Background:
Structure probing data (DMS and 2A3) for a 177-nucleotide construct.
[RMDB]
RNA sequence: GGGAACGACUCGAGUAGAGUCGAAAACUUACGGCCUACGGAUAACAGACAUGAGCACCCUGGUCUCUGCAGUUAUCACCAUCGAGGCCCAGAUCUGGAUACUGAUCGCUAAAGCAGUUACAGCUCCGGCACAAUCUUAGUUCGCUAAGAUUGUGCCAAAAGAAACAACAACAACAAC
Reactivity to DMS in 0.01 (KOAc 150mM, MgCl2 10mM, bicine 150mM(pH8.5), 24C), signal-to-noise 2, nucleotides 027 to 126: c000u040u010a080c300g000g000c000c000u000a080c150g020g000a010u000a010a010c040a180g000a230c040a000u030g000a070g000c100a080c010c100c090u060g030g040u050c010u000c000u020g000c090a180g000u000u000a000u000c000a150c170c090a170u010c030g000a080g000g050c010c020c020a090g030a050u000c000u020g010g000a060u020a000c000u010g000a020u010c080g000c180u000a050a100a090g000c010a020g010u000u000a300c060a040g010c180u020c020c190
Reactivity to 2A3 in 0.01 (KOAc 150mM, MgCl2 10mM, bicine 150mM(pH8.5), 24C), signal-to-noise 5, nucleotides 027 to 126: c040u110u100a050c050g000g000c020c000u050a110c040g040g000a000u000a040a000c010a020g250a100c000a050u280g000a020g000c050a110c050c070c110u170g090g030u090c010u000c000u010g000c010a010g000u010u010a010u040c040a040c140c060a080u190c030g040a020g000g000c020c010c000a030g000a040u050c000u030g020g010a050u030a220c040u030g030a060u120c060g020c190u230a140a110a070g010c010a020g000u010u030a020c000a010g000c030u000c020c060
For DMS, 2,102 sequencing reads were counted. DMS adducts were read by reverse transcription with MarathonRT. DMS (dimethyl sulfate) methylates the pairing face of unpaired adenines and cytosines. The reactions ran in a buffer of 150 mM KOAc, 10 mM MgCl2 and 150 mM bicine (pH 8.5), at 24 C. Reactivities are given for positions 27 through 126.